[RMDB]
RNA sequence: GGGAACGACUCGAGUAGAGUCGAAAAAAAAUGAGUGCGUGGUAGCACAAACCAGUCCAAUCUUCGGCACAUGGUCGCACAAGUACAGCUUCGCCUGUACAAAGCGAACAACAACAACAACAAGCAAGUAUAAAUACGCUUUCGAGCGUAUUUAUACAAAAGAAACAACAACAACAAC
Reactivity to 2A3 in 0.01 (KOAc 150mM, MgCl2 10mM, bicine 150mM(pH8.5), 24C), signal-to-noise 2, nucleotides 027 to 126: a010a000a000a040u120g000a010g010u000g010c020g030u060g080g040u170a040g020c020a010c020a030a020a020c000c000a010g030u020c010c010a020a090u050c050u130u140c070g070g000c050a040c020a150u080g080g000u010c030g000c010a050c000a160a100g000u000a000c000a000g000c030u140u160c100g020c040c010u000g000u060a000c030a020a040a000g000c010g010a000a010c010a000a010c010a000a000c010a000a000c000a020a000c000a020a010g100c060a160a080
Reactivity to DMS in 0.01 (KOAc 150mM, MgCl2 10mM, bicine 150mM(pH8.5), 24C), signal-to-noise 3, nucleotides 027 to 126: a030a030a100a080u010g010a140g000u010g000c040g020u000g000g010u010a120g000c070a020c020a060a080a090c010c030a070g000u000c020c020a080a070u010c120u000u010c050g000g020c100a070c150a130u000g000g030u000c000g010c000a040c110a100a150g000u000a010c000a000g000c010u020u000c220g010c270c000u010g000u000a010c010a040a100a120g000c010g000a030a060c010a020a050c020a020a010c020a020a030c060a000a020c070a140a100g000c190a050a120
Conditions: 150 mM KOAc, 10 mM MgCl2 and 150 mM bicine (pH 8.5), 24 C. The record gives the reactivity of an RNA of 177 nucleotides to 2A3 and DMS. Values cover nucleotides 27 to 126. 2A3 adducts were read by reverse transcription with SuperScript II with manganese. For 2A3, 3,474 sequencing reads were counted. For DMS the reverse transcriptase was MarathonRT.